[RMDB]
RNA sequence: GGGAACGACUCGAGUAGAGUCGAAAAUACGUUUUGCGUCAGGGUUGAACCCUCCACCAAAAAGUCUUGGUCACCAAUAUCAAUAUAGGUGUUGGCGCAAUGACCGCUGCUUUCCUGCUGACCUAGCUGUUCAAUGAAGCCUGUGACCGCAGUUAGCUCUGGAAGCAGUAUUCGUACUGCUUCCAGAAAAAGAAACAACAACAACAAC
Reactivity to 2A3 in 0.01 (KOAc 150mM, MgCl2 10mM, bicine 150mM(pH8.5), 24C), signal-to-noise 2, nucleotides 027 to 156: u130a010c040g000u000u030u000u080g000c010g020u010c010a020g000g060g060u150u200g120a160a140c020c000c000u030c020c000a030c000c020a010a040a070a060a100g080u050c050u090u040g010g010u010c000a000c030c010a080a100u060a030u170c120a250a050u130a020u100a300g020g000u030g030u000u080g000g030c030g000c000a000a000u090g020a030c040c030g030c090u060g000c000u090u050u040c010c010u010g000c020u050g040a070c000c010u010a000g000c020u000g030u080u090c050a070a060u190g120a150a030g040c030c040u040g080u100g080a070c020c050g030c000a010g010u060u100a010g020c010
Reactivity to DMS in 0.01 (KOAc 150mM, MgCl2 10mM, bicine 150mM(pH8.5), 24C), signal-to-noise 1, nucleotides 027 to 156: u020a060c000g000u000u000u000u010g000c040g130u000c100a020g000g000g000u000u000g000a140a300c010c010c000u040c040c000a070c070c030a030a090a080a070a080g020u020c000u000u020g020g000u000c050a020c000c010a060a020u000a050u020c010a060a180u030a030u000a030g000g000u010g020u000u000g020g000c040g000c020a100a050u020g000a080c060c030g000c020u010g010c050u000u000u000c030c010u000g000c080u000g000a170c040c000u000a130g020c030u020g060u000u000c050a000a160u010g010a110a050g020c010c000u000g030u050g040a090c090c090g010c060a130g040u000u000a060g000c040